[RMDB]
RNA sequence: GGGAACGACUCGAGUAGAGUCGAAAAUGCGGGGCUUCCCCAUAAGAUGGCAGGAACCCACUCAUUGGGGUCCGCUGUUCCAUUCUUUCUUACCUUGUGGCCGGCAUGGUCCCAGCCUCCUCGCUGGAAAGGGGGGACUUCGGUCCCCCCAAAAGAAACAACAACAACAAC
Reactivity to 2A3 in 0.01 (KOAc 150mM, MgCl2 10mM, bicine 150mM(pH8.5), 24C), signal-to-noise 1, nucleotides 027 to 129: u110g000c000g000g020g000g010c000u070u050c000c000c000c000a030u180a220a000g000a030u030g000g000c070a050g030g000a040a100c010c010c010a000c050u200c050a150u000u190g000g000g000g000u000c000c000g030c050u000g010u010u070c000c000a050u200u060c000u000u000u000c000u030u050a050c010c030u020u230g000u070g030g000c010c010g010g010c000a040u060g040g020u030c020c000c000a000g050c000c000u000c030c000u080c000g030c000u000g120g010a010a000a010
Reactivity to DMS in 0.01 (KOAc 150mM, MgCl2 10mM, bicine 150mM(pH8.5), 24C), signal-to-noise 1, nucleotides 027 to 129: u020g000c100g010g030g000g000c110u000u010c000c000c000c000a050u100a100a300g010a220u010g000g170c110a110g010g020a140a070c200c090c000a000c040u000c270a050u000u000g010g010g010g010u090c000c000g000c020u000g000u000u000c080c080a070u010u000c090u000u000u000c000u080u010a110c180c000u000u010g000u110g090g010c020c140g010g000c080a150u060g000g020u030c000c000c000a230g040c040c020u010c000c000u050c090g020c040u100g000g000a180a070a080
Chemical mapping of a 170-nucleotide RNA with 2A3 and DMS. For 2A3, 1,610 sequencing reads were counted. For DMS the reverse transcriptase was MarathonRT. Conditions: 150 mM KOAc, 10 mM MgCl2 and 150 mM bicine (pH 8.5), 24 C. Reactivities are given for positions 27 through 129.